[RMDB]
RNA sequence: GGGAACGACUCGAGUAGAGUCGAAAAACAAGGCCACCGAUAUGCGCACUAGAGGAAACCAACGGCUCAGGCCGGGCGGGUCCCGCGCAGUUUUCCCGCUGAUCCGGCAAUCCUUCGGCGGGGCGACUCGCGUGUGUUAUUUCGAUAACACACGCGAAAAAGAAACAACAACAACAAC
Reactivity to DMS in 0.01 (KOAc 150mM, MgCl2 10mM, bicine 150mM(pH8.5), 24C), signal-to-noise 1, nucleotides 027 to 126: a020c270a030a100g000g060c000c120a000c010c020g000a060u060a040u000g000c030g060c020a110c030u010a150g020a030g000g000a030a100a030c000c000a150a140c030g000g000c000u060c300a150g000g030c030c000g000g000g000c100g110g070g000u000c040c000c000g090c080g040c130a000g000u000u000u010u000c000c000c030g030c000u010g020a040u010c140c040g020g000c120a180a170u050c040c010u000u010c040g040g020c010g020g020g000g000c050g020a060c110